[RMDB]
RNA sequence: GGGAACGACUCGAGUAGAGUCGAAAAGCAGUUUCACUCACCAUAGACUCUUGAGGAAGAGUGUCAGUAUUGCUUCCUCAAGCAAUACAUUACGGUAUGCCAAUACUGUAAUUGACAGCAGAUUGGCAUCUGCUCUAUGUCAUGAAACUGGUGAGUCACCCCUAUGCGGUUUCGACCGCAUAGGGGUAAAAGAAACAACAACAACAAC
Reactivity to 2A3 in 0.01 (KOAc 150mM, MgCl2 10mM, bicine 150mM(pH8.5), 24C), signal-to-noise 1, nucleotides 027 to 156: g020c030a000g000u000u000u000c000a000c000u010c010a000c000c000a020u050a090g040a100c020u000c000u100u030g010a010g000g040a020a000g090a000g060u080g080u000c060a030g090u120a080u160u230g040c010u000u040c000c060u080c060a000a000g020c000a060a000u120a070c050a020u030u050a000c050g060g000u110a020u030g070c000c010a020a070u070a210c050u030g010u100a120a090u020u110g090a060c060a080g010c000a000g030a030u010u020g080g000c030a050u000c020u030g020c000u040c000u050a030u070g000u000c000a040u050g080a080a080a070c070u020g000g010u000g000a000g000u000c000